This 207-nucleotide RNA was probed chemically with 2A3. Source: RMDB library RNAMAK, as collected in RNAgym. 2A3 adducts were read by reverse transcription with SuperScript II with manganese. Conditions: 150 mM KOAc, 10 mM MgCl2 and 150 mM bicine (pH 8.5), 24 C.
RNA sequence: GGGAACGACUCGAGUAGAGUCGAAAACGCGACUUCGGUCGCGACCUAUCCUAAGUCCUAGACAUGUGAGGUAAGGACGACGAAGUGGUCGGAAACGACCACAGAGUCCGAAACUCACAACAGCUAGGAUAUGGACCUUGACACGUUUCGACGUGAACGAGCGAACCUUAUUCGUAAGGUUCGCUCGAAAAGAAACAACAACAACAAC
Reactivity to 2A3 in 0.01 (KOAc 150mM, MgCl2 10mM, bicine 150mM(pH8.5), 24C), signal-to-noise 1, nucleotides 027 to 156: c020g000c000g000a000c010u030u150c190g000g000u000c000g000c000g000a000c000c000u070a110u110c010c030u060a250a090g040u010c000c000u000a000g070a200c050a220u030g070u000g040a000g050g000u000a130a000g030g000a030c000g050a070c020g060a180a000g000u000g010g000u010c010g000g000a080a090a110c010g060a020c020c010a000c000a000g000a000g000u000c000c020g010a200a010a000c000u020c000a000c000a000a000c000a050g130c010u000a000g000g000a000u000a010u000g000g000a010c000c110u170u280g020a050c030a000c000g060u150u120u300c280g060a050c020g000u000g140a110a060